Conditions: 150 mM KOAc, 10 mM MgCl2 and 150 mM bicine (pH 8.5), 24 C. Structure probing data (2A3 and DMS) for a 177-nucleotide construct. For 2A3 the reverse transcriptase was SuperScript II with manganese. The 2A3 profile rests on 2,945 reads. It was measured as part of the RMDB library TTRDEL. DMS adducts were read by reverse transcription with MarathonRT.

RNA sequence: GGGAACGACUCGAGUAGAGUCGAAAAGAUAUGGAGUUUGGGAGCCUUGUGGGACGAAUUCGGAAACGAACUAUCCCACGGGCGAAGAACAAACUCCUAAGUCAAAACGUCACCUUCGGGUGACGAACAAAUGGUCUUUCUUCGGAAAGACCAUUUGAAAAGAAACAACAACAACAAC
Reactivity to 2A3 in 0.01 (KOAc 150mM, MgCl2 10mM, bicine 150mM(pH8.5), 24C), signal-to-noise 2, nucleotides 027 to 126: g030a010u050a070u140g000g000a000g020u010u020u000g030g010g040a050g020c040c050u300u300g210u010g000g030g030a040c100g140a260a300u050u010c010g000g000a040a060a030c010g020a030a000c030u030a050u020c040c000c010a010c000g000g000g000c030g020a000a070g000a020a000c000a000a000a000c010u000c000c000u010a100a000g040u040c030a020a020a090a180c010g010u010c000a020c020c000u030u070c240g120g000g000u020g000a000c000g010a020a010
Reactivity to DMS in 0.01 (KOAc 150mM, MgCl2 10mM, bicine 150mM(pH8.5), 24C), signal-to-noise 4, nucleotides 027 to 126: g010a040u000a300u010g010g010a010g020u010u000u000g010g000g020a130g030c000c000u000u030g080u000g000g010g020a010c120g020a050a150u000u000c000g000g000a150a080a180c000g010a010a010c070u000a240u010c010c000c000a010c000g000g000g000c000g000a020a060g000a120a130c020a000a000a000c010u000c010c000u010a010a060g000u000c050a080a050a120a130c000g010u000c000a000c000c000u000u010c180g030g020g000u000g010a000c000g000a030a080